[RMDB]
Source information
An RNA of 207 nucleotides, treated with DMS and 2A3 and read out base by base.
RNA sequence: GGGAACGACUCGAGUAGAGUCGAAAAGGUCGCUCACACCUCACUGUAACUGUUGGCUCAACUUGUACACUACAAGGACCCCAAGAAGGGCAUGUCAGUUGGUGGAGAAUAUAUGAUAGUGGAUGGUUCAUUAGGCCAUGUGACCAGCCUGGUAACACAAACCAAUGCUUUUCGAAGCAUUGGUUUGAAAAGAAACAACAACAACAAC
Reactivity to DMS in 0.01 (KOAc 150mM, MgCl2 10mM, bicine 150mM(pH8.5), 24C), signal-to-noise 2, nucleotides 027 to 156: g020g010u010c000g030c050u000c040a060c050a110c050c010u010c040a050c060u010g030u010a070a120c010u000g020u010u010g030g020c050u010c050a080a170c030u000u020g020u000a120c120a120c120u000a070c040a050a100g030g000a090c050c010c010c010a070a160g030a080a140g010g020g000c000a070u000g020u020c070a050g040u020u000g030g060u010g000g000a190g030a060a080u000a060u010a080u010g010a170u000a090g000u000g030g020a080u000g000g020u000u000c080a090u000u000a090g030g010c000c030a120u000g030u010g000a100c030c010a140g000c010c010u000g050g050u000a050a130c070a130
Reactivity to 2A3 in 0.01 (KOAc 150mM, MgCl2 10mM, bicine 150mM(pH8.5), 24C), signal-to-noise 2, nucleotides 027 to 156: g000g010u010c020g000c000u050c040a080c010a010c000c040u020c030a040c040u060g070u140a130a000c020u060g070u090u090g090g000c010u020c090a090a060c000u010u000g020u030a040c130a090c230u110a030c050a100a000g040g030a170c000c000c030c020a050a040g070a060a050g040g000g000c050a020u100g060u060c000a010g010u000u050g030g010u010g070g030a060g020a040a030u190a010u040a060u110g100a080u080a040g100u080g040g120a070u090g110g000u030u100c070a050u130u060a050g000g040c020c010a010u100g010u030g030a030c000c020a020g060c020c000u050g040g000u070a070a010c040a000

DMS (dimethyl sulfate) methylates the pairing face of unpaired adenines and cytosines. For DMS the reverse transcriptase was MarathonRT. Values cover nucleotides 27 to 156. Conditions: 150 mM KOAc, 10 mM MgCl2 and 150 mM bicine (pH 8.5), 24 C.